[RMDB]
The data come from the RNA Mapping Database (RMDB), library TTRDEL. The record gives the reactivity of an RNA of 177 nucleotides to DMS and 2A3. Values cover nucleotides 27 to 126.
RNA sequence: GGGAACGACUCGAGUAGAGUCGAAAAGAUAUGGACUCGGACCAACAGCGUUUAUUCGGAAACGAAUACUGACGACAUGGGCCCGAGUCCUAAGUCAAAUCGCGCUAAGGUUCGCCUUAGCGCGAAAGUGUAUAAUAGCGUUCGCGCUAUUAUACACAAAAGAAACAACAACAACAAC
Reactivity to DMS in 0.01 (KOAc 150mM, MgCl2 10mM, bicine 150mM(pH8.5), 24C), signal-to-noise 6, nucleotides 027 to 126: g000a020u000a070u000g000g000a020c000u000c000g000g000a050c010c010a110a150c180a140g010c010g020u000u000u000a000u000u000c000g010g010a030a020a040c000g010a010a000u000a010c300u010g000a010c000g010a150c220a080u010g000g000g000c020c000c000g010a020g010u000c000c000u000a000a030g000u000c020a070a110a100u000c000g000c000g010c000u000a010a010g010g010u000u010c270g010c010c000u000u000a010g010c000g020c000g010a000a010a050
Reactivity to 2A3 in 0.01 (KOAc 150mM, MgCl2 10mM, bicine 150mM(pH8.5), 24C), signal-to-noise 6, nucleotides 027 to 126: g000a000u020a010u040g000g000a000c000u030c010g020g000a020c030c020a180a300c220a280g100c000g000u020u030u010a000u000u010c000g010g000a010a010a010c000g000a010a010u040a060c160u230g070a020c010g040a060c110a300u170g010g000g000c010c000c000g010a000g010u000c000c000u000a000a000g000u000c010a000a020a150u040c000g000c000g000c010u000a010a000g020g000u040u060c060g160c010c000u000u000a000g000c000g000c000g000a000a010a000
Conditions: 150 mM KOAc, 10 mM MgCl2 and 150 mM bicine (pH 8.5), 24 C.